[RMDB]
RNA sequence: GGGAACGACUCGAGUAGAGUCGAAAAGGCGUGGAGAGAGGGCCGCGGUGCUCUGGAGUAGAGGCUCUGCCUUCGAAACACCAUCGAUCGUCCCCUCUUCUUUACCUUCUUUGGCUCUUCUUGGAGACGCGACCGGUGGCACCCCUGCUCGGUUCGCCAUCUUUGUAGCCUUCGGGCUACAAAGAUGAAAAGAAACAACAACAACAAC
Reactivity to 2A3 in 0.01 (KOAc 150mM, MgCl2 10mM, bicine 150mM(pH8.5), 24C), signal-to-noise 1, nucleotides 027 to 156: g030g010c120g060u090g040g010a010g020a000g060a250g020g010g010c010c010g040c010g000g000u000g000c010u020c000u020g010g000a020g010u010a000g000a010g010g040c050u110c230u300g040c030c020u190u100c000g020a000a000a010c000a010c130c000a000u000c000g030a300u050c020g020u010c000c000c000c000u000c000u000u000c000u020u030u050a030c000c000u010u000c080u000u010u020g000g010c000u000c000u050u040c020u020u070g230g010a000g010a010c020g000c000g020a020c000c000g010g010u140g000g000c070a140c040c040c000c040u020g000c040u080c080g040g000u100u080c020g010c010

An RNA of 207 nucleotides, treated with 2A3 and read out base by base. Conditions: 150 mM KOAc, 10 mM MgCl2 and 150 mM bicine (pH 8.5), 24 C. The 2A3 profile rests on 1,513 reads. For 2A3 the reverse transcriptase was SuperScript II with manganese. Reactivities are given for positions 27 through 156.